Record summary
Structure probing data (DMS and 2A3) for a 177-nucleotide construct. The DMS profile rests on 4,480 reads. DMS adducts were read by reverse transcription with MarathonRT.

RNA sequence: GGGAACGACUCGAGUAGAGUCGAAAAUCUAUCACCAGCCCAUGUUUACGACACGAAUGGGCUGUUGCAAAUUACGUAUAGCUCUUGCAACAUCGUGUCGAAACCUUCCCAAGCUAUACGCCACAAACACCGUAUACGAUUUCGAUCGUAUACGGUGAAAAGAAACAACAACAACAAC
Reactivity to DMS in 0.01 (KOAc 150mM, MgCl2 10mM, bicine 150mM(pH8.5), 24C), signal-to-noise 5, nucleotides 027 to 126: u000c060u000a100u000c090a090c080c050a050g000c000c000c030a070u000g020u000u000u010a160c040g010a020c020a020c020g020a060a100u010g010g030g020c110u000g000u000u000g000c070a030a060a150u000u000a100c030g000u000a020u000a010g010c000u010c220u000u000g000c050a010a030c030a060u000c020g020u000g000u000c010g010a060a060a060c150c170u000u000c000c000c000a180a050g000c010u000a010u000a000c000g010c150c180a080c150a080a050a120
Reactivity to 2A3 in 0.01 (KOAc 150mM, MgCl2 10mM, bicine 150mM(pH8.5), 24C), signal-to-noise 5, nucleotides 027 to 126: u010c010u000a120u090c040a020c100c030a020g030c000c000c000a040u090g090u080u120u060a080c030g010a000c010a000c040g060a100a090u120g060g070g000c040u010g000u000u000g000c010a020a050a110u220u110a080c010g000u020a010u010a020g010c010u030c020u130u030g010c030a030a010c010a070u050c010g000u000g000u000c000g000a100a020a010c010c040u020u010c010c000c000a010a000g000c000u010a010u000a020c010g020c040c020a130c050a010a100a010
It was measured as part of the RMDB library M2PK90. Conditions: 150 mM KOAc, 10 mM MgCl2 and 150 mM bicine (pH 8.5), 24 C.